The record gives the reactivity of an RNA of 177 nucleotides to 2A3 and DMS. 2A3 is a SHAPE reagent: it acylates the 2'-hydroxyl of flexible nucleotides of all four kinds. The data come from the RNA Mapping Database (RMDB), library OK1LIB. Conditions: 150 mM KOAc, 10 mM MgCl2 and 150 mM bicine (pH 8.5), 24 C. DMS adducts were read by reverse transcription with MarathonRT. The DMS profile rests on 4,293 reads.
RNA sequence: GGGAACGACUCGAGUAGAGUCGAAAAGAGCUGGGACGAGUGCGUACGAAACUCGGAAAGUACGGAAAGAAAAUCAGCAACACGGAAGUCUACGAAAGAAAACGUGGAAAAAGUAGACGAAAGAAAAGGGAUAUACAUACUUCGGUAUGUAUAUCCCAAAAGAAACAACAACAACAAC
Reactivity to 2A3 in 0.01 (KOAc 150mM, MgCl2 10mM, bicine 150mM(pH8.5), 24C), signal-to-noise 3, nucleotides 027 to 126: g090a030g000c010u010g010g010g010a040c040g000a010g070u180g080c020g040u040a030c030g080a170a060a060c060u040c070g010g070a090a110a020g030u030a020c030g030g160a090a070a050g080a000a070a070a020u100c000a010g040c010a030a060c020a000c040g090g080a100a030g010u000c000u030a020c050g050a140a000a090g130a030a130a050a030c060g000u090g060g110a070a090a040a040a000g020u010a010g030a010c080g060a040a070a010g140a010a030a000a000
Reactivity to DMS in 0.01 (KOAc 150mM, MgCl2 10mM, bicine 150mM(pH8.5), 24C), signal-to-noise 3, nucleotides 027 to 126: g000a100g000c000u000g000g010g010a100c100g020a100g030u030g000c020g000u010a060c060g010a070a110a090c130u030c030g020g040a040a110a210g000u030a000c060g000g000a030a060a080g010a060a090a050a140u000c020a060g070c080a080a190c090a040c000g000g000a200a140g030u010c060u010a040c020g000a090a090a180g000a160a020a060a060c050g010u000g000g010a070a040a010a110a040g000u000a000g000a000c000g020a090a070a080g000a040a020a090a090